Overview
Chemical mapping of a 207-nucleotide RNA with DMS and 2A3. Source: RMDB library M2RFPK, as collected in RNAgym.
RNA sequence: GGGAACGACUCGAGUAGAGUCGAAAAUGCUGUCGUUGACAGCGCCCAACGCUUCACAACCUGAAAGAAGCGCCUGUUAUCAGGACGGUUGAUCCAUUUACCGGUGCAGACCUCUGCAAACAGCGGGUUUAACAAGCAUCUUUCGAGAUGCUUGUAACUUCAUAACAUCGUUCGCGAUGUUAUGAAGAAAAGAAACAACAACAACAAC
Reactivity to DMS in 0.01 (KOAc 150mM, MgCl2 10mM, bicine 150mM(pH8.5), 24C), signal-to-noise 2, nucleotides 027 to 156: u000g020c000u010g010u000c020g030u000u010g040a080c020a050g020c050g060c020c040c000a110a100c030g020c000u000u000c010a150c080a090a130c020c000u000g000a180a180a290g000a040a010g010c070g000c040c030u000g020u020u010a170u010c030a090g000g010a080c080g000g010u000u000g000a190u000c080c070a250u000u000u000a060c060c050g020g010u000g020c030a110g030a130c070c080u010c040u000g020c010a070a060a110c050a040g020c080g040g000g000u000u000u000a130a070c000a000a020g000c000a010u000c000u000u000u000c240g000a040g000a010u000g020c000u000u000g050u000a020a080
Reactivity to 2A3 in 0.01 (KOAc 150mM, MgCl2 10mM, bicine 150mM(pH8.5), 24C), signal-to-noise 4, nucleotides 027 to 156: u120g000c000u000g000u040c080g300u090u300g000a000c000a010g000c000g030c020c000c000a010a000c000g010c010u000u020c040a090c060a250a020c010c000u010g000a010a010a000g000a010a000g000c000g010c000c000u050g020u070u060a210u240c010a020g130g030a070c060g010g040u010u000g010a030u020c010c010a020u070u110u260a230c100c060g040g010u050g010c040a010g030a070c000c030u040c010u040g010c030a050a020a010c020a010g010c020g000g030g000u040u090u110a040a010c000a000a000g000c000a000u000c000u040u050u080c150g090a030g000a010u000g000c000u000u000g000u000a000a020
Overview
DMS adducts were read by reverse transcription with MarathonRT. Conditions: 150 mM KOAc, 10 mM MgCl2 and 150 mM bicine (pH 8.5), 24 C.